[RMDB]
RNA sequence: GGGAACGACUCGAGUAGAGUCGAAAAUUCGAGAGAUUUGGAGGGGUUGGUCCCUCCGGUGAGAGAAGAAAACUCAUCCCAAACAAAAAACAGGGUUUCUGAUAACCGGUGCGACAAUAUGCCCUUCUGCAUAAGUACUAUUCGUAGUACUUAUGCAAAAAGAAACAACAACAACAAC
Reactivity to 2A3 in 0.01 (KOAc 150mM, MgCl2 10mM, bicine 150mM(pH8.5), 24C), signal-to-noise 7, nucleotides 027 to 126: u090u040c040g010a010g030a000g030a110u080u070u220g030g000a000g010g030g010g000u110u210g090g060u210c000c000c000u010c000c000g000g000u010g000a070g000a000g010a130a020g040a010a070a000a010c020u020c000a040u050c030c020c010a080a120a050c070a030a050a020a000a010a000c030a010g000g000g020u000u040u000c020u050g060a110u060a160a030c020c030g010g030u090g010c010g020a030c040a110a070u070a070u300g010c020c000c000u030u060c020
Reactivity to DMS in 0.01 (KOAc 150mM, MgCl2 10mM, bicine 150mM(pH8.5), 24C), signal-to-noise 8, nucleotides 027 to 126: u010u000c020g010a120g000a160g010a120u000u010u010g010g000a030g010g010g010g010u020u020g000g010u010c000c030c000u000c010c010g020g020u000g000a060g010a060g010a160a210g000a080a030a020a020c010u000c010a050u000c000c030c010a110a110a130c120a000a040a030a030a040a040c090a070g000g000g000u000u000u000c040u000g000a110u000a090a050c070c050g000g010u020g010c160g010a070c080a080a090u020a080u020g000c010c010c020u000u000c070
The record gives the reactivity of an RNA of 177 nucleotides to 2A3 and DMS. For 2A3 the reverse transcriptase was SuperScript II with manganese.